[RMDB]
Overview
This 177-nucleotide RNA was probed chemically with DMS and 2A3. The RNA was probed in 150 mM KOAc, 10 mM MgCl2 and 150 mM bicine (pH 8.5) at 24 C.
RNA sequence: GGGAACGACUCGAGUAGAGUCGAAAAAGGCAAUUUGUUCGGGUGAUAUUUCAGCCUGGGAAUGAGUGUAUGGGGUGUUGGAAGCCGAACACAUGAUAGGCAUUUGUAUCAUUACAGGUUGUGUGCCGAUAUUACGCGCAUUCGUGCGCGUAAUAUCAAAAGAAACAACAACAACAAC
Reactivity to DMS in 0.01 (KOAc 150mM, MgCl2 10mM, bicine 150mM(pH8.5), 24C), signal-to-noise 2, nucleotides 027 to 126: a050g000g020c020a170a060u010u010u020g000u000u000c060g020g040g000u010g030a090u020a060u020u000u010c110a160g010c000c020u000g000g000g000a040a040u020g000a040g030u030g010u020a070u030g000g000g020g010u020g020u000u000g020g020a090a100g000c020c020g010a030a080c050a050c090a010u010g000a070u030a020g000g020c020a150u010u000u040g030u000a050u010c080a090u000u030a010c050a020g000g000u010u000g000u000g020u000g010c150c060
Reactivity to 2A3 in 0.01 (KOAc 150mM, MgCl2 10mM, bicine 150mM(pH8.5), 24C), signal-to-noise 1, nucleotides 027 to 126: a000g040g000c000a020a040u020u020u300g080u000u000c030g010g000g010u090g010a050u030a110u130u040u000c000a020g010c000c000u020g000g040g060a030a130u100g000a020g030u040g010u060a010u000g000g000g000g000u030g010u090u140g040g010a000a090g000c000c000g010a000a000c050a000c010a010u050g060a050u200a050g020g000c000a000u000u020u140g010u010a140u000c020a000u030u050a000c010a020g050g000u030u000g000u000g000u070g000c000c000